[RMDB]
This 207-nucleotide RNA was probed chemically with 2A3.
The reactions ran in a buffer of 150 mM KOAc, 10 mM MgCl2 and 150 mM bicine (pH 8.5), at 24 C.
The data come from the RNA Mapping Database (RMDB), library RFM130.
The 2A3 profile rests on 721 reads.

RNA sequence: GGGAACGACUCGAGUAGAGUCGAAAACAGGAAACUGGUUAAUCGUUUUCCUUGGUAGUAUAGCGGAAACCAUAAAUAAGAAGAACUCUAAGUGCUUGAGUAGAGUUAAAAUAAUUAGACAGGCAAUAUUACAAAAAUCCGCGCUUCGGCGCGGAAAGAUCAUAUUUUACUUCGGUAAAAUAUGAUCAAAAGAAACAACAACAACAAC
Reactivity to 2A3 in 0.01 (KOAc 150mM, MgCl2 10mM, bicine 150mM(pH8.5), 24C), signal-to-noise 1, nucleotides 027 to 156: c030a010g020g070a050a020a050c080u190g020g010u140u170a090a100u110c050g000u030u030u030u050c000c010u000u060g060g000u010a020g020u020a020u070a120g030c020g000g000a080a000a000c000c020a030u090a040a030a010u110a050a080g060a010a010g020a080a000c000u010c000u000a000a020g020u020g170c030u000u010g000a000g000u010a000g000a000g040u080u130a030a000a030a000u080a000a000u160u010a000g000a000c000a000g000g000c000a000a010u100a080u160u100a080c050a000a270a000a000a010u030c000c010g000c010g000c000u020u000c070g030g000c000g000c000g000g000a010a000a010